Chemical mapping of a 207-nucleotide RNA with DMS and 2A3.
The data come from the RNA Mapping Database (RMDB), library M2RFPK.
In probing experiments dimethyl sulfate is read out at A N1 and C N3, which are open when not base-paired.
2A3 adducts were read by reverse transcription with SuperScript II with manganese.
The RNA was probed in 150 mM KOAc, 10 mM MgCl2 and 150 mM bicine (pH 8.5) at 24 C.

RNA sequence: GGGAACGACUCGAGUAGAGUCGAAAAAAUUGGGUUAAAACGGUGGGGGACGAUCCCGUAACAUCCGUCCUAACGGCGACAGACUGCACGGCCCUGCCUCUUAGGUGUGUUCAAUGUACAGUCGUUCUGGCCCCUAAGGCGUUCGCGCCUUAGGGAACUGUUAAUCUACAUUCGUGUAGAUUAACAGAAAAGAAACAACAACAACAAC
Reactivity to DMS in 0.01 (KOAc 150mM, MgCl2 10mM, bicine 150mM(pH8.5), 24C), signal-to-noise 3, nucleotides 027 to 156: a050a080u010u000g000g030g020u000u000a020a070a080a060c060g030g030u000g010g020g040g020g010a080c090g000a090u010c020c030c020g030u000a090a090c070a090u000c030c010g010u000c020c020u000a070a110c090g030g010c050g010a070c020a080g010a060c040u010g000c110a080c040g010g000c020c050c030u010g000c010c020u000c090u010u000a050g030g030u000g020u010g020u000u000c030a070a080u010g010u000a080c050a050g010u000c010g010u000u000c010u000g000g020c070c000c000c000u000a010a020g010g030c000g020u000u010c250g040c020g000c020c000u010u000a010g010g030g000a010a010
Reactivity to 2A3 in 0.01 (KOAc 150mM, MgCl2 10mM, bicine 150mM(pH8.5), 24C), signal-to-noise 5, nucleotides 027 to 156: a010a020u130u090g030g020g020u090u080a080a060a020a030c050g020g010u060g030g030g010g000g010a010c060g020a050u100c020c030c010g000u020a020a020c030a130u060c020c010g020u050c010c030u050a110a030c040g020g000c010g010a020c040a060g060a060c030u070g010c050a000c030g060g000c010c010c000u030g020c020c020u070c080u080u150a050g030g010u020g020u010g010u070u090c060a080a070u100g010u060a050c020a050g000u000c020g010u020u030c030u060g100g010c000c000c000c000u000a000a000g000g000c000g010u020u060c180g000c000g000c050c000u000u000a010g000g000g000a010a000